[RMDB]
RNA sequence: GGGAACGACUCGAGUAGAGUCGAAAAAAAAAGAUAUGGAGAGCGUAAGGCUGAUGACCAUACACUAUAUAUGUCGGAAACGACAUAUAAACUGUAUGCAAGGCUAUCGCUCUCCUAAGUCAAAAAACUAAGUAGCAUCGUUCGCGAUGCUACUUAGAAAAGAAACAACAACAACAAC
Reactivity to DMS in 0.01 (KOAc 150mM, MgCl2 10mM, bicine 150mM(pH8.5), 24C), signal-to-noise 1, nucleotides 027 to 126: a030a030a080a160a100g000a050u000a300u000g020g000a000g000a000g000c000g020u000a180a200g000g000c000u000g000a070u040g020a120c300c020a030u000a000c000a000c000u000a300u000a020u000a000u020g000u000c000g070g000a240a090a240c000g120a000c020a000u000a000u000a000a000a180c300u000g040u000a000u020g000c000a040a100g000g020c000u000a300u000c000g020c000u000c000u000c000c000u000a000a070g010u000c090a000a000a000a020a080a170

Structure probing data (DMS) for a 177-nucleotide construct.
It was measured as part of the RMDB library TTRDES.
Values cover nucleotides 27 to 126.
The reactions ran in a buffer of 150 mM KOAc, 10 mM MgCl2 and 150 mM bicine (pH 8.5), at 24 C.
For DMS, 551 sequencing reads were counted.